[RMDB]
RNA sequence: GGGAACGACUCGAGUAGAGUCGAAAAUGUCUGUAAUCCCAGCACUUUGGGAGGCCGAGGGAGGCAGAUCACUUGAGGUCAGGAGUUUAAGACCAGCCUGGCCAGCAUGUGAAACCCAUCUCUGUUAAUAUCACUAAGGGUUCGCCCUUAGUGAUAUAAAAGAAACAACAACAACAAC
Reactivity to 2A3 in 0.01 (KOAc 150mM, MgCl2 10mM, bicine 150mM(pH8.5), 24C), signal-to-noise 2, nucleotides 027 to 126: u060g010u010c030u010g070u050a100a220u040c010c000c010a020g040c050a040c110u210u200u100g180g050g030a090g020g000c020c100g100a150g000g010g020a010g040g000c010a000g010a030u040c020a010c010u040u050g000a020g000g010u000c010a000g000g020a050g030u060u080u180a200a040g060a050c010c010a020g110c010c010u010g010g000c030c000a010g030c000a010u020g010u010g050a060a070a070c000c020c010a080u060c090u020c000u030g040u070u150a090
Reactivity to DMS in 0.01 (KOAc 150mM, MgCl2 10mM, bicine 150mM(pH8.5), 24C), signal-to-noise 5, nucleotides 027 to 126: u000g010u000c010u010g010u000a090a100u000c000c010c000a080g000c090a060c100u010u010u000g020g010g020a110g010g000c030c030g000a110g000g010g000a080g010g010c040a040g000a060u000c020a010c020u000u000g010a230g010g000u010c000a020g010g000a100g000u000u010u010a080a130g020a040c090c090a110g000c010c010u000g000g000c020c010a070g010c030a020u000g010u000g000a060a100a130c020c010c010a100u000c100u000c030u000g010u010u010a080
This 177-nucleotide RNA was probed chemically with 2A3 and DMS. The RNA was probed in 150 mM KOAc, 10 mM MgCl2 and 150 mM bicine (pH 8.5) at 24 C. DMS (dimethyl sulfate) methylates the pairing face of unpaired adenines and cytosines. The data come from the RNA Mapping Database (RMDB), library OK2TRN. For 2A3, 2,483 sequencing reads were counted. For 2A3 the reverse transcriptase was SuperScript II with manganese.